RNA sequence: GGGAACGACUCGAGUAGAGUCGAAAAGGCUGCUAAGUUCUGAACUGUUUGCUGCAUUUCUAGCGCACUGACAACAUCAAUACGAUUCACUCCCGCUGGAGUAGGGAGCAUCACUGGCCCGGCAACCUAGCAUCUAUUGGUUCGCCAAUAGAUGCUAAAAAGAAACAACAACAACAAC
Reactivity to DMS in 0.01 (KOAc 150mM, MgCl2 10mM, bicine 150mM(pH8.5), 24C), signal-to-noise 3, nucleotides 027 to 126: g000g000c020u000g010c050u000a120a060g010u000u020c060u000g030a070a100c090u000g000u010u000u010g020c050u010g030c040a070u000u000u010c100u000a100g020c070g010c050a070c100u000g010a070c060a030a080c090a080u000c050a040a050u000a060c120g000a070u000u000c120a090c060u000c030c040c060g010c130u000g000g010a090g040u010a070g020g000g000a050g010c040a030u010c040a050c090u000g000g000c030c020c030g000g000c050a070a060c080c100
Reactivity to 2A3 in 0.01 (KOAc 150mM, MgCl2 10mM, bicine 150mM(pH8.5), 24C), signal-to-noise 2, nucleotides 027 to 126: g060g000c020u030g000c040u110a080a080g030u070u080c060u100g050a070a060c010u040g010u070u100u090g050c070u020g000c000a030u000u170u020c030u050a000g060c010g000c050a010c080u060g000a020c050a080a010c000a070u080c040a060a040u120a170c060g030a000u040u030c040a030c040u010c000c010c000g000c090u130g060g030a110g030u070a100g050g000g000a010g000c000a020u010c000a010c030u010g070g000c050c020c000g000g000c030a040a060c010c030

Chemical mapping of a 177-nucleotide RNA with DMS and 2A3. The RNA was probed in 150 mM KOAc, 10 mM MgCl2 and 150 mM bicine (pH 8.5) at 24 C. For 2A3, 2,626 sequencing reads were counted. 2A3 adducts were read by reverse transcription with SuperScript II with manganese. Reactivities are given for positions 27 through 126. Source: RMDB library OK2TST, as collected in RNAgym.